An RNA of 177 nucleotides, treated with 2A3 and DMS and read out base by base. Values cover nucleotides 27 to 126.

[RMDB]
RNA sequence: GGGAACGACUCGAGUAGAGUCGAAAAGAUAUGGAUACAUUCUUCUUUUGACGCGAUACUAGUCGGAAACGACUAGAUCGCGAUAAGAAGAUGUAUCCUAAGUCAAAGCGGAUGUUCGCAUCCGCAAUCGACAAAAUUGGUUCGCCAAUUUUGUCGAAAAAGAAACAACAACAACAAC
Reactivity to 2A3 in 0.01 (KOAc 150mM, MgCl2 10mM, bicine 150mM(pH8.5), 24C), signal-to-noise 2, nucleotides 027 to 126: g030a020u090a020u250g010g000a000u020a000c000a070u180u300c010u000u000c020u070u110u140u280g300a160c080g000c000g020a000u160a300c020u000a010g010u020c020g040g010a070a090a080c010g000a000c000u000a000g000a000u000c010g000c020g000a000u020a000a000g000a000a010g000a000u000g000u020a000u000c000c000u000a040a000g010u010c060a140a090a010g000c020g000g000a020u030g000u030u140c300g000c180a000u000c000c000g000c000a000a090
Reactivity to DMS in 0.01 (KOAc 150mM, MgCl2 10mM, bicine 150mM(pH8.5), 24C), signal-to-noise 1, nucleotides 027 to 126: g000a080u010a300u000g000g000a000u000a000c000a010u020u000c000u000u000c000u000u000u000u020g030a210c110g030c000g020a000u000a060c000u000a000g010u000c000g000g000a060a140a140c010g030a050c000u000a000g000a020u000c000g030c000g000a010u000a000a000g000a010a000g000a030u000g010u010a000u000c000c020u000a000a090g000u010c060a110a090a100g000c000g000g000a010u010g000u000u020c300g010c000a000u000c010c000g000c000a010a020

Source information: The data come from the RNA Mapping Database (RMDB), library TTRDES. The reactions ran in a buffer of 150 mM KOAc, 10 mM MgCl2 and 150 mM bicine (pH 8.5), at 24 C.